The record gives the reactivity of an RNA of 177 nucleotides to 2A3.
The RNA was probed in 150 mM KOAc, 10 mM MgCl2 and 150 mM bicine (pH 8.5) at 24 C.
Reactivities are rounded to 0.1 and cut off at 0 and 3.
It was measured as part of the RMDB library OK1LIB.
[RMDB]
RNA sequence: GGGAACGACUCGAGUAGAGUCGAAAAUAGACCUUUUUGACCCUGUGGAGGUGACUCACUUGGUCAAUUACUUACUAUUCAUCAGUCACCUUUCCUCCGUAUCUUCGUUCGACGACAUCUUGUCGUCUAGCGCAGAAGCUUUCGAGCUUCUGCGCUAAAAAGAAACAACAACAACAAC
Reactivity to 2A3 in 0.01 (KOAc 150mM, MgCl2 10mM, bicine 150mM(pH8.5), 24C), signal-to-noise 2, nucleotides 027 to 126: u200a090g200a130c000c020u000u060u000u100u000g020a020c000c000c000u000g000u010g040g080a180g010g000u000g020a020c000u010c010a010c000u000u000g000g000u000c020a020a020u020u060a060c080u180u000a070c020u120a300u150u300c160a220u060c020a100g000u000c000a010c000c000u000u080u000c000c020u070c010c040g090u210a150u080c060u100u090c070g100u040u070c050g000a000c000g000a000c000a070u130c090u240u280g000u020c000g000u040c000